[RMDB]
RNA sequence: GGGAACGACUCGAGUAGAGUCGAAAAGUCUUGCCACCGAAUCGCAAGGAUCUCGCCGAUCCGGGUGCCGGUGCCGGCGAUCACGUCGAACAGGUCGGGGACGUCGAGGCCGCGCUUCGGGCCGGCGUUGUUGCUGCCCGACCAUGUCGCGAUCCGAGGUAAACACAUGAUUCGUCAUGUGUUUACCAAAAGAAACAACAACAACAAC
Reactivity to 2A3 in 0.01 (KOAc 150mM, MgCl2 10mM, bicine 150mM(pH8.5), 24C), signal-to-noise 1, nucleotides 027 to 156: g010u000c010u040u040g000c030c070a150c000c070g100a070a100u170c020g000c010a030a040g070g000a070u000c010u030c130g050c000c030g000a000u110c060c000g030g060g020u280g160c040c020g020g000u020g080c040c010g030g000c020g050a090u090c050a030c140g090u150c020g050a020a030c010a010g000g030u020c000g000g000g030g010a020c000g000u080c090g020a230g090g060c020c050g040c070g000c150u220u290c130g110g100g010c040c020g000g000c030g030u000u020g010u010u080g130c120u090g000c000c020c000g010a000c010c010a010u020g060u010c030g020c000g000a030u010c000c030g060a050
Chemical mapping of a 207-nucleotide RNA with 2A3. It was measured as part of the RMDB library OK3TST. The RNA was probed in 150 mM KOAc, 10 mM MgCl2 and 150 mM bicine (pH 8.5) at 24 C.